This 177-nucleotide RNA was probed chemically with 2A3 and DMS. Values cover nucleotides 27 to 126. 2A3 adducts were read by reverse transcription with SuperScript II with manganese. The DMS profile rests on 29,559 reads. For 2A3, 5,295 sequencing reads were counted.

RNA sequence: GGGAACGACUCGAGUAGAGUCGAAAAAGUUCGCGAUGGGCUCGACCAGCGAGUUGAGCGCCUACGGGCCCGUAGGUAACCCCUGGUGUCCCAGUAGGGUGCCCGGCGGCAGUAGCGGUGGUAGCGCAAGGAGAGAAAUAUUCGUAUUUCUCUCCUUAAAAGAAACAACAACAACAAC
Reactivity to 2A3 in 0.01 (KOAc 150mM, MgCl2 10mM, bicine 150mM(pH8.5), 24C), signal-to-noise 3, nucleotides 027 to 126: a000g060u080u070c050g000c020g070a090u110g030g000g010c010u030c020g020a030c020c010a120g130c030g070a150g070u040u050g040a030g020c020g060c000c020u010a030c030g000g100g030c040c050c000g000u030a020g000g030u020a040a060c000c000c010c020u020g040g030u130g070u140c040c020c020a040g060u110a060g030g030g020u020g000c000c010c010g070g000c010g000g000c000a040g030u080a010g020c020g000g030u030g020g050u090a030g030c030g010c070
Reactivity to DMS in 0.01 (KOAc 150mM, MgCl2 10mM, bicine 150mM(pH8.5), 24C), signal-to-noise 9, nucleotides 027 to 126: a120g010u010u010c030g020c040g010a120u010g010g010g020c020u000c030g010a050c050c080a200g020c200g010a100g010u000u000g000a060g010c030g010c020c010u000a100c030g000g000g010c060c030c020g010u010a070g010g000u010a100a080c090c040c010c020u000g010g010u000g000u000c100c010c010a190g010u010a070g010g010g010u000g010c020c010c050g010g010c070g000g000c040a080g010u000a080g010c050g010g010u010g010g010u000a070g010c060g020c150